This 177-nucleotide RNA was probed chemically with DMS and 2A3. It was measured as part of the RMDB library RFMREP. For DMS the reverse transcriptase was MarathonRT. Reactivities are given for positions 27 through 126. DMS (dimethyl sulfate) methylates the pairing face of unpaired adenines and cytosines. The 2A3 profile rests on 808 reads. For 2A3 the reverse transcriptase was SuperScript II with manganese. The reactions ran in a buffer of 150 mM KOAc, 10 mM MgCl2 and 150 mM bicine (pH 8.5), at 24 C.
[RMDB]
RNA sequence: GGGAACGACUCGAGUAGAGUCGAAAAGAAGAUUAAAGGUUAAUAUAUGAGUGGCCUUUAUAGAGUGCAAUAUAUGUAUUUGUAGACGAGGAGGAUAGUGAUCGAAUAGAUCGGCGGAUGCUAUCCCGUGUUUUAUUUACUUCGGUAAAUAAAACACAAAAGAAACAACAACAACAAC
Reactivity to DMS in 0.01 (KOAc 150mM, MgCl2 10mM, bicine 150mM(pH8.5), 24C), signal-to-noise 2, nucleotides 027 to 126: g020a200a090g000a130u000u000a020a010a010g000g010u000u000a080a080u010a110u000a110u010g000a130g060u000g000g000c010c000u000u000u000a000u000a090g000a130g040u000g010c010a040a070u010a150u000a080u010g010u000a020u000u000u000g010u000a090g010a080c090g010a080g030g010a120g030g000a040u000a010g020u000g000a030u000c000g010a090a050u000a110g000a030u010c040g010g010c140g000g000a050u000g000c000u000a020u000c000c010c070
Reactivity to 2A3 in 0.01 (KOAc 150mM, MgCl2 10mM, bicine 150mM(pH8.5), 24C), signal-to-noise 1, nucleotides 027 to 126: g010a040a000g020a060u040u040a000a080a000g010g030u020u080a110a080u160a160u050a150u300g130a050g130u050g020g000c020c000u000u000u040a040u030a050g120a030g010u040g010c000a000a080u080a020u040a040u240g120u110a100u050u150u080g040u110a070g050a190c090g030a070g080g040a020g040g000a020u010a020g040u100g030a010u060c010g000a060a030u050a180g060a070u010c000g030g000c030g070g030a030u160g030c010u010a020u060c030c020c010